[RMDB]
RNA sequence: GGGAACGACUCGAGUAGAGUCGAAAAGGCUUUUUGCCUCAUGAUGUUCGGGUGGUUUGUUAUCGUGUUGUGAGGCAAAAAGCAGAAAGCCCCGAAGUUAAUUCUCAUUAACCACGAGGCUUGAUCUGCUUUUACCAUAAUUCGUUAUGGUAAAAGCAAAAGAAACAACAACAACAAC
Reactivity to 2A3 in 0.01 (KOAc 150mM, MgCl2 10mM, bicine 150mM(pH8.5), 24C), signal-to-noise 1, nucleotides 027 to 126: g040g010c000u000u000u000u000u010g000c000c000u010c000a020u020g020a000u010g090u160u080c080g040g090g040u150g050g180u160u220u200g160u160u200a100u130c010g000u010g030u040u000g020u000g000a010g000g000c000a000a000a000a000a000g010c010a000g020a020a000a000g000c010c010c010c020g030a050a030g000u000u020a040a030u190u170c150u040c180a010u010u010a000a000c010c000a020c080g000a020g000g000c000u000u040g030a140u020c060u060
Reactivity to DMS in 0.01 (KOAc 150mM, MgCl2 10mM, bicine 150mM(pH8.5), 24C), signal-to-noise 2, nucleotides 027 to 126: g000g020c000u000u010u010u000u020g000c020c000u020c000a030u000g010a020u000g010u000u000c050g020g030g020u030g010g030u000u010u000g030u000u010a090u000c040g040u010g010u000u000g010u000g010a030g000g010c020a010a000a010a010a000g000c010a050g000a160a050a020g010c000c000c030c000g010a260a140g010u000u000a010a020u000u020c300u000c180a110u000u000a010a000c010c110a300c020g000a040g000g000c000u000u010g000a120u010c100u000